RNA sequence: GGGAACGACUCGAGUAGAGUCGAAAAUCAUUGUCUAGAUUAAACAUACAGUUUGCACUUGCCAUGAUUCGUUAUAUAACUAUCAUCAAGUAUUAACAGUUCGUUUGAUGAUCAUAUUAUUUUUAUGCGCCACAGAUACCUUCGGGUAUCUGUGGCGAAAAGAAACAACAACAACAAC
Reactivity to 2A3 in 0.01 (KOAc 150mM, MgCl2 10mM, bicine 150mM(pH8.5), 24C), signal-to-noise 2, nucleotides 027 to 126: u000c000a000u010u200g050u080c040u140a030g000a150u150u030a040a020a000c000a000u260a010c120a080g000u050u000u040g000c040a000c000u000u000g030c040c040a130u050g000a020u130u180c150g060u300u000a180u040a000u010a170a040c050u040a000u000c000a000u000c000a000a000g020u050a270u080u250a190a230c080a110g050u200u120c000g000u070u010u000g000a010u000g000a090u080c090a020u000a040u020u010a150u050u270u070u000u000a180u200g000